[RMDB]
Annotation
This 177-nucleotide RNA was probed chemically with 2A3 and DMS. Reactivities are given for positions 27 through 126. It was measured as part of the RMDB library OK1LIB. For DMS the reverse transcriptase was MarathonRT. As a SHAPE reagent, 2A3 marks flexible, mostly unpaired nucleotides at the ribose 2'-OH. The RNA was probed in 150 mM KOAc, 10 mM MgCl2 and 150 mM bicine (pH 8.5) at 24 C.
RNA sequence: GGGAACGACUCGAGUAGAGUCGAAAAUUGUCCUUUUUUAACGCUGGAAAACAGAUUGAGUGGGUGCAAUUAGUUCGUCUUUUGAUCUGGGGGUGAAUUUGACUUUUGUAACGGCGCAUUACAAGGGCGAUAAGUAUUGUUUCGACAAUAUUUAUCGAAAAGAAACAACAACAACAAC
Reactivity to 2A3 in 0.01 (KOAc 150mM, MgCl2 10mM, bicine 150mM(pH8.5), 24C), signal-to-noise 3, nucleotides 027 to 126: u070u060g040u050c010c000u030u020u000u000u010u070a090a010c040g000c010u010g010g040a040a000a020a010c000a010g020a020u020u020g020a020g020u050g000g010g010u030g020c000a000a010u050u020a040g030u010u010c010g000u000c000u020u070u010u050g020a040u000c010u020g010g000g000g000g000u030g020a030a040u040u040u080g050a030c010u010u020u040u020g010u020a040a010c030g080g000c010g000c000a000u000u040a020c010a010a000g020g030g000
Reactivity to DMS in 0.01 (KOAc 150mM, MgCl2 10mM, bicine 150mM(pH8.5), 24C), signal-to-noise 9, nucleotides 027 to 126: u030u030g010u000c010c010u000u010u020u020u030u030a050a100c110g010c030u000g000g000a100a060a070a080c090a040g010a110u010u000g000a070g020u010g000g000g010u010g000c030a060a060u020u010a070g010u020u010c050g000u010c020u000u010u010u010g010a050u010c030u010g000g010g010g010g010u010g000a050a090u030u020u020g010a100c030u000u010u000u010g020u010a030a050c070g000g000c030g010c050a120u000u010a030c070a020a020g000g000g010